[RMDB]
RNA sequence: GGGAACGACUCGAGUAGAGUCGAAAAGACGCCUGUGUGGCGAAGCGAGCAUGAGAUGGAGCCGCAAGAGAAGAUGAGAUAGAAGCGGCCCGAUAGCUUGCUCGCAAAAAGAUCCAUCUCACAGAGACGUGCCUAUCAUAUUCGUAUGAUAGGCACGAAAAGAAACAACAACAACAAC
Reactivity to 2A3 in 0.01 (KOAc 150mM, MgCl2 10mM, bicine 150mM(pH8.5), 24C), signal-to-noise 3, nucleotides 027 to 126: g080a010c010g080c000c040u130g060u090g120u180g130g060c020g010a020a000g000c000g000a010g000c010a020u030g020a040g050a090u130g000g000a030g000c000c020g060c030a060a020g030a000g070a150a120g060a060u260g080a060g100a150u250a060g130a160a010g010c000g000g000c000c000c000g100a070u070a040g030c000u000u000g000c000u000c010g000c000a040a040a030a000a000g030a000u000c010c000a010u000c010u010c000a140c020a030g080a010g040a080
Reactivity to DMS in 0.01 (KOAc 150mM, MgCl2 10mM, bicine 150mM(pH8.5), 24C), signal-to-noise 3, nucleotides 027 to 126: g010a140c050g000c010c000u020g050u040g040u030g000g000c030g000a150a140g010c000g010a040g010c000a010u010g000a050g010a020u000g000g020a070g010c030c000g010c000a130a100g030a160g000a140a080g010a140u030g000a180g030a210u020a140g020a160a110g000c010g000g000c000c030c000g000a020u000a040g030c000u010u000g000c010u000c000g020c020a010a040a070a100a090g020a100u000c010c040a140u010c030u010c030a030c150a100g000a080g010a150